Source information:
This 207-nucleotide RNA was probed chemically with 2A3. Conditions: 150 mM KOAc, 10 mM MgCl2 and 150 mM bicine (pH 8.5), 24 C. The data come from the RNA Mapping Database (RMDB), library M2RFPK. The 2A3 profile rests on 564 reads.

RNA sequence: GGGAACGACUCGAGUAGAGUCGAAAAGGCAAUAACGAACUAAUUCUAAGCAAGUAAUGGAGAAAUGCCAGGGUCACUAUCUAGCCAUAAUAGUGCUUGACAGUAUGAUACUAACUGAACAAUAAGCAAAAGCGCUGGUACUUCGGUACCAGCGCAAGGUAUCUUCGAGGUUCGCCUCGAAGAUACCAAAAGAAACAACAACAACAAC
Reactivity to 2A3 in 0.01 (KOAc 150mM, MgCl2 10mM, bicine 150mM(pH8.5), 24C), signal-to-noise 1, nucleotides 027 to 156: g080g000c080a120a100u170a170a060c050g050a030a020c080u000a020a070u120u050c010u100a020a060g030c010a070a000g060u070a090a080u090g060g000a080g100a060a060a090u170g020c030c030a010g080g000g010u040c030a010c010u050a010u050c070u050a010g090c000c000a050u090a200a000u040a140g040u010g010c000u030u030g030a010c010a010g010u100a000u060g080a000u030a050c030u050a270a000c020u010g040a000a010c030a040a060u140a190a000g070c020a000a000a100a080g000c020g000c000u000g000g000u010a010c010u000u050c110g030g000u010a000c010c000a000g000c000g000c000a000a000